[RMDB]
RNA sequence: GGGAACGACUCGAGUAGAGUCGAAAACGUGAACAUCGCUCUGCUAAGUCCCGUCGUUCUUCCAGUCAGAGCGAGAUUGUAAGCAACCUUAUGCGCAAUGAAGACAUAGAGGGACUUCUACAAUAAGCGAUACGCAUCAGUUCGCUGAUGCGUAUCGAAAAGAAACAACAACAACAAC
Reactivity to DMS in 0.01 (KOAc 150mM, MgCl2 10mM, bicine 150mM(pH8.5), 24C), signal-to-noise 2, nucleotides 027 to 126: c150g000u010g020a070a120c150a080u000c020g030c010u000c010u000g040c110u060a050a050g000u010c050c030c010g000u010c050g000u010u020c000u000u070c000c110a060g010u030c020a000g020a050g000c010g000a020g000a040u030u000g000u030a050a060g000c020a120a100c080c080u020u020a020u020g010c000g000c100a050a090u010g000a110a120g000a090c040a090u000a020g000a090g000g010g010a100c040u010u000c090u050a030c110a110a060u050a050a140g010
Reactivity to 2A3 in 0.01 (KOAc 150mM, MgCl2 10mM, bicine 150mM(pH8.5), 24C), signal-to-noise 5, nucleotides 027 to 126: c110g120u120g100a060a000c010a130u020c000g010c000u000c020u010g040c070u080a050a000g040u050c030c010c000g050u040c020g020u040u020c000u090u040c010c000a070g080u120c020a010g000a010g040c050g010a000g000a020u030u090g010u050a010a080g010c020a040a040c000c000u150u110a050u090g030c060g000c010a050a130u210g020a140a050g010a060c010a030u090a050g150a070g040g000g020a000c000u030u030c020u030a080c050a070a080u150a080a030g060